[RMDB]
RNA sequence: GGGAACGACUCGAGUAGAGUCGAAAAGACUUGGUGGUCACCGACGGCGAAGGCUGGCUGACCGAACUGUCCACCCGCGAUCUGCGCGAGGUGUUCGCGCUGUCCGAAGGCGCCGUCGGUGAGUAGCAUGCGAUCAAUAUUUCGAUAUUGAUCGCAUAAAAGAAACAACAACAACAAC
Reactivity to 2A3 in 0.01 (KOAc 150mM, MgCl2 10mM, bicine 150mM(pH8.5), 24C), signal-to-noise 7, nucleotides 027 to 126: g050a040c040u070u100g040g020u070g030g080u120c000a000c010c000g000a000c000g000g000c010g010a090a020g090g030c040u030g010g000c020u030g050a210c010c030g010a040a010c040u100g080u120c030c020a030c010c030c000g020c020g020a140u120c070u300g070c020g000c020g040a120g030g080u080g050u050u010c020g000c020g000c020u010g050u040c010c010g040a060a020g100g010c010g000c000c000g010u000c000g000g000u000g000a000g000u000a010g030c020
Reactivity to DMS in 0.01 (KOAc 150mM, MgCl2 10mM, bicine 150mM(pH8.5), 24C), signal-to-noise 9, nucleotides 027 to 126: g010a170c090u000u000g010g030u000g010g010u000c010a010c010c010g000a030c010g010g010c010g010a080a080g010g020c130u010g000g010c020u000g000a110c110c040g000a030a040c060u010g010u010c140c110a210c040c040c030g010c060g010a140u000c170u010g010c010g020c050g010a070g020g020u010g020u000u000c010g010c210g000c010u000g010u000c010c020g020a150a210g000g000c010g010c000c010g010u000c000g000g000u000g000a010g010u000a080g020c080